[RMDB]
RNA sequence: GGGAACGACUCGAGUAGAGUCGAAAAGAUAUGGACGAUAUCAAGCAACAGCGUUCCAUUCGGAAACGAAUGAGACGACAUGCUUAGUAUCGUCCUAAGUCAAAAGUGGUCAGUUCGCUGACCACAAGAUAAAUAACCACUUCGGUGGUUAUUUAUCAAAAGAAACAACAACAACAAC
Reactivity to 2A3 in 0.01 (KOAc 150mM, MgCl2 10mM, bicine 150mM(pH8.5), 24C), signal-to-noise 5, nucleotides 027 to 126: g020a010u030a010u090g010g000a000c010g000a000u000a010u120c070a040a000g000c020a070a200c080a290g040c010g060u150u030c010c000a010u000u010c000g000g020a050a020a030c000g000a010a010u050g010a060g000a140c010g090a070c030a170u300g000c000u000u010a030g000u000a010u010c000g000u010c000c000u000a010a000g000u000c020a000a030a030a210g000u000g020g000u000c010a010g010u060u160c240g040c160u000g000a000c000c000a000c000a000a000
Reactivity to DMS in 0.01 (KOAc 150mM, MgCl2 10mM, bicine 150mM(pH8.5), 24C), signal-to-noise 6, nucleotides 027 to 126: g000a030u000a230u000g000g000a020c000g010a020u000a000u000c050a010a010g020c000a090a110c300a190g000c010g000u000u000c040c000a010u000u000c000g010g000a070a050a110c000g000a010a010u000g000a050g010a010c000g000a040c120a270u000g010c000u000u000a050g010u000a000u000c000g010u000c000c000u000a000a060g010u000c020a110a070a150a150g020u000g000g010u000c000a010g020u000u010c280g020c010u000g010a010c000c000a000c000a030a030
An RNA of 177 nucleotides, treated with 2A3 and DMS and read out base by base. 2A3 adducts were read by reverse transcription with SuperScript II with manganese. The DMS profile rests on 9,453 reads. Source: RMDB library TTRDES, as collected in RNAgym.